[RMDB]
RNA sequence: GGGAACGACUCGAGUAGAGUCGAAAAAGAGGCAUUCAAUUUAAUGCUGCGGGCGCUGGCCGAGUCACGGGAACGGCAGGCAAGGCUGGUUACCGACGCCGGACAUGAAUUGCGUACCCCGCUAACGACUUCCUGAUUGAUUCGUCAAUCAGGAAGUAAAAGAAACAACAACAACAAC
Reactivity to 2A3 in 0.01 (KOAc 150mM, MgCl2 10mM, bicine 150mM(pH8.5), 24C), signal-to-noise 2, nucleotides 027 to 126: a030g060a090g000g000c000a010u030u020c020a110a300u110u160u300a120a070u110g010c020u060g020c030g000g070g000c060g000c040u040g010g040c010c020g000a020g010u020c040a010c110g000g010g080a150a040c020g070g000c130a080g020g070c010a000a060g050g010c010u040g080g000u000u090a070c030c020g050a010c030g000c010c070g000g040a020c020a090u110g050a140a030u140u140g020c030g020u130a160c000c000c000c010g000c080u070a110a040c060g010
Reactivity to DMS in 0.01 (KOAc 150mM, MgCl2 10mM, bicine 150mM(pH8.5), 24C), signal-to-noise 3, nucleotides 027 to 126: a130g010a130g000g020c010a020u000u000c060a050a060u010u010u010a080a040u010g010c010u000g010c040g010g010g030c220g050c010u010g000g000c000c030g010a300g020u000c040a080c050g010g000g020a100a180c010g000g000c060a060g010g020c100a050a190g010g010c020u000g010g000u010u010a120c070c010g000a060c100g010c030c100g000g000a040c160a030u030g010a030a060u000u010g010c060g000u000a120c110c020c000c050g000c100u010a080a100c240g010
The record gives the reactivity of an RNA of 177 nucleotides to 2A3 and DMS.
It was measured as part of the RMDB library OK2TRN.
High 2A3 reactivity points to a flexible backbone, as in loops and unpaired stretches.
For 2A3, 1,895 sequencing reads were counted.
For DMS the reverse transcriptase was MarathonRT.
The DMS profile rests on 2,336 reads.
Reactivities are given for positions 27 through 126.